[RMDB]
RNA sequence: GGGAACGACUCGAGUAGAGUCGAAAAGACGUGGAGGUAUCGCGCCCUCCUUUGCGCGUAAGUACGUCGAAAUUCGGUGCUGUGGAUCGCACCGUUUGAUCCAUUAGAUAUCCGCUAUGUGCCGCGGUUGGGCAUUUACACUUACCCGAAAGGGGAAAUGAUAUGGACCAUUCGUGGUCCAUAUCAUAAAAGAAACAACAACAACAAC
Reactivity to 2A3 in 0.01 (KOAc 150mM, MgCl2 10mM, bicine 150mM(pH8.5), 24C), signal-to-noise 3, nucleotides 027 to 156: g050a010c040g000u030g070g080a090g050g090u110a070u210c030g000c010g010c040c010c000u130c020c050u050u040u090g010c000g000c010g000u030a060a070g050u030a040c010g000u030c040g020a020a020a060u100u070c010g010g020u010g000c040u060g010u090g090g070a070u030c040g000c020a070c020c020g000u020u000u040g030a020u000c020c020a020u050u160a070g100a080u080a050u070c010c010g000c050u040a040u190g020u030g040c020c020g020c060g060g000u060u050g050g000g000c000a010u050u080u040a040c050a020c000u090u140a070c000c010c030g080a080a040a030g000g020g010g000a020a120
Reactivity to DMS in 0.01 (KOAc 150mM, MgCl2 10mM, bicine 150mM(pH8.5), 24C), signal-to-noise 3, nucleotides 027 to 156: g000a040c060g070u000g000g000a070g030g020u000a070u010c030g050c070g020c090c040c040u000c060c060u000u000u010g010c020g030c040g040u020a100a130g020u010a040c060g020u000c010g010a060a060a070u000u000c000g010g020u000g020c000u000g020u000g030g010a150u010c090g010c050a190c060c060g000u000u000u010g010a060u000c030c030a120u000u010a090g000a140u000a090u010c010c020g000c060u010a110u000g030u010g000c030c040g020c030g040g020u000u000g010g010g020c040a040u030u000u000a110c110a070c160u010u010a160c010c010c000g010a060a070a260g000g000g030g000a030a080